Chemical mapping of a 177-nucleotide RNA with 2A3 and DMS. Reactivities are given for positions 27 through 126. For 2A3, 961 sequencing reads were counted. DMS adducts were read by reverse transcription with MarathonRT. As a SHAPE reagent, 2A3 marks flexible, mostly unpaired nucleotides at the ribose 2'-OH. Conditions: 150 mM KOAc, 10 mM MgCl2 and 150 mM bicine (pH 8.5), 24 C. The DMS profile rests on 950 reads. The data come from the RNA Mapping Database (RMDB), library OK2TST.

[RMDB]
RNA sequence: GGGAACGACUCGAGUAGAGUCGAAAACUUUCGGCGUCGCCGUAUUGAGACGGGCGGCGAAGACGAGACCCGCAAGUGCUGCCAGCACACCCAUAUUGACGAAGGUGAGAAACGUCAGCCGCUCGGAGGAUUAUGAUCACUUCGGUGAUCAUAAUCCAAAAGAAACAACAACAACAAC
Reactivity to 2A3 in 0.01 (KOAc 150mM, MgCl2 10mM, bicine 150mM(pH8.5), 24C), signal-to-noise 1, nucleotides 027 to 126: c020u080u060u040c010g040g000c040g150u100c110g060c010c010g060u010a080u030u280g040a070g050a070c000g010g000g030c000g000g000c000g000a010a020g010a000c010g010a000g060a050c000c010c030g010c070a100a040g020u010g050c020u040g100c040c050a050g000c010a000c000a010c040c000c030a090u100a020u160u200g010a040c020g000a120a030g040g010u050g000a070g070a110a070a000c000g000u010c020a010g000c010c000g070c000u000c000g030g010a030
Reactivity to DMS in 0.01 (KOAc 150mM, MgCl2 10mM, bicine 150mM(pH8.5), 24C), signal-to-noise 2, nucleotides 027 to 126: c020u000u000u000c030g000g040c040g000u000c110g000c020c000g010u000a040u010u000g030a170g040a110c000g050g000g010c000g010g000c000g000a100a040g010a020c020g000a110g010a140c020c000c030g030c150a090a100g020u000g000c000u010g010c160c180a150g030c000a060c020a180c070c060c040a140u010a240u010u010g030a060c140g000a150a160g030g010u000g000a080g010a050a090a190c030g000u010c020a190g000c010c010g000c000u000c000g000g010a080